[RMDB]
Annotation
The record gives the reactivity of an RNA of 207 nucleotides to 2A3.
RNA sequence: GGGAACGACUCGAGUAGAGUCGAAAAUGCUGGUGUUGUCUUGAGCAAUGAAGAUGAUUUCUUGAGGGAGGUUUCACUCUGCAGAGAGCUCUUCACCUUAGUGUGGCGGUAUUGAAUUACAUUUGUUGUGUGGUUUGGAGAGGGGAUUUGGGUUGGGCGUAUCAACGCAGUUCGCUGCGUUGAUACGAAAAGAAACAACAACAACAAC
Reactivity to 2A3 in 0.01 (KOAc 150mM, MgCl2 10mM, bicine 150mM(pH8.5), 24C), signal-to-noise 1, nucleotides 027 to 156: u000g000c000u000g000g140u120g030u080u000g070u110c050u070u110g070a030g000c020a000a070u030g020a030a040g030a040u040g040a020u110u230u020c050u020u040g070a120g070g100g000a020g080g020u000u120u170c020a070c040u020c000u000g000c020a000g020a000g000a050g020c000u000c000u020u010c010a180c030c000u010u010a040g000u030g040u060g140g020c060g000g020u110a120u040u060g060a080a070u030u100a030c080a150u010u070u030g000u020u000g050u000g030u000g070g000u220u050u150g080g000a070g000a070g020g000g000g040a100u010u070u150g040g020g040u090u130g010g000g100
Record summary
Conditions: 150 mM KOAc, 10 mM MgCl2 and 150 mM bicine (pH 8.5), 24 C. Source: RMDB library ARCHII, as collected in RNAgym. 2A3 adducts were read by reverse transcription with SuperScript II with manganese. Values cover nucleotides 27 to 156.